About this RNA:
This 207-nucleotide RNA was probed chemically with 2A3. Values cover nucleotides 27 to 156. 2A3 adducts were read by reverse transcription with SuperScript II with manganese. It was measured as part of the RMDB library RNAMAK. The 2A3 profile rests on 1,579 reads.

RNA sequence: GGGAACGACUCGAGUAGAGUCGAAAAGCGCUGUUCGCAGCGCCAUUCGCGUACUACUCUUUGACAUGAGCUACAGCAGAACACAUCCCAAAUAGGAUGUUCCCUGCUGGUCAGCUCAACAGCAAAGAGUAUCGCCACAAUCGGCGUUCGCGCCGAAGACCUAUUAGCCUUUCGAGGCUAAUAGGUCAAAAGAAACAACAACAACAAC
Reactivity to 2A3 in 0.01 (KOAc 150mM, MgCl2 10mM, bicine 150mM(pH8.5), 24C), signal-to-noise 2, nucleotides 027 to 156: g010c000g000c010u010g000u070u190c300g000c080a020g000c000g000c000c000a070u140u100c050g000c000g040u040a130c030u020a000c010u000c000u000u000u050g160a220c100a170u080g000a000g000c000u000a010c000a000g060c000a030g040a250a010c000a000c000a090u010c040c010c050a100a300a080u300a030g000g010a000u000g000u040u040c000c030c010u000g000c000u010g000g000u040c060a000g030c000u010c000a000a000c000a010g020c000a000a000a000g000a000g000u000a000u060c000g000c020c020a120c080a040a170u060c010g000g000c040g060u110u080c250g010c000g000c080c000g040a040a070